[RMDB]
Structure probing data (2A3 and DMS) for a 177-nucleotide construct. It was measured as part of the RMDB library OK2TRN. Conditions: 150 mM KOAc, 10 mM MgCl2 and 150 mM bicine (pH 8.5), 24 C. For DMS, 825 sequencing reads were counted.
RNA sequence: GGGAACGACUCGAGUAGAGUCGAAAAGAAAGGCAGCCAUUGCAGCCCACGAAGCCAUUCGAAGCAUGCUUUUGCAUGCCGCCCACGACUGAGGGCAGCUGCGGCACUGAGGGCAGCUGCCGAAAGAGCCGCUAAAUAUGUUCGCAUAUUUAGCGGCAAAAGAAACAACAACAACAAC
Reactivity to 2A3 in 0.01 (KOAc 150mM, MgCl2 10mM, bicine 150mM(pH8.5), 24C), signal-to-noise 1, nucleotides 027 to 126: g090a010a120a030g040g000c020a020g020c030c010a080u150u180g020c000a040g000c000c040c000a080c080g020a080a020g000c040c020a080u040u050c030g000a080a010g000c010a020u010g000c030u000u140u210u300g010c020a030u000g030c010c020g000c010c030c030a060c020g170a100c090u160g050a150g010g050g010c000a000g000c060u030g000c050g060g050c070a040c120u170g060a200g000g050g000c000a000g000c000u000g000c000c000g000a010a060a020g000a030
Reactivity to DMS in 0.01 (KOAc 150mM, MgCl2 10mM, bicine 150mM(pH8.5), 24C), signal-to-noise 1, nucleotides 027 to 126: g000a130a080a110g010g010c070a020g000c000c070a150u010u000g000c120a140g000c000c040c080a160c090g000a040a020g020c110c040a040u000u000c080g000a150a080g030c020a020u000g000c000u000u000u000u000g030c000a020u000g000c010c100g000c020c010c000a060c080g020a160c100u020g000a180g010g020g020c000a110g000c000u000g000c060g000g030c030a070c110u010g000a060g000g000g000c000a130g040c020u000g030c000c000g000a040a100a080g000a180